[RMDB]
RNA sequence: GGGAACGACUCGAGUAGAGUCGAAAAUCAAUGGGAUGAGAGACGGAUACAGUGUCUCUUUCGCUCGAAAGAACAGAGGUAGAACAAAUGUAAUGGCCGAGAUAUCGUUUCAGUCGUCAUUCUUUGAGAAUUAGUACCCGUUCGCGGGUACUAAUUCAAAAGAAACAACAACAACAAC
Reactivity to 2A3 in 0.01 (KOAc 150mM, MgCl2 10mM, bicine 150mM(pH8.5), 24C), signal-to-noise 1, nucleotides 027 to 126: u050c000a010a080u140g060g020g040a040u050g010a020g020a010g010a100c000g000g000a050u100a180c040a070g050u010g100u040c000u000c100u050u000u040c010g000c040u020c040g050a040a020a000g030a010a060c060a090g030a070g070g020u040a010g040a100a040c040a010a160a030u130g040u190a050a050u060g100g020c030c010g070a020g040a040u120a010u060c030g000u050u030u080c000a020g010u050c010g070u040c040a060u070u000c010u000u000u040g140a230
Reactivity to DMS in 0.01 (KOAc 150mM, MgCl2 10mM, bicine 150mM(pH8.5), 24C), signal-to-noise 1, nucleotides 027 to 126: u000c050a040a040u010g000g010g040a090u020g000a070g000a080g000a020c020g010g020a050u000a140c160a090g030u010g020u000c040u010c010u000u010u000c080g000c080u000c080g000a110a080a100g020a060a060c080a030g000a070g020g020u000a060g000a060a060c110a020a100a090u030g030u020a050a070u000g020g010c060c030g000a090g010a110u000a040u000c050g010u010u000u000c010a060g000u010c090g020u020c060a040u000u000c020u000u000u000g010a170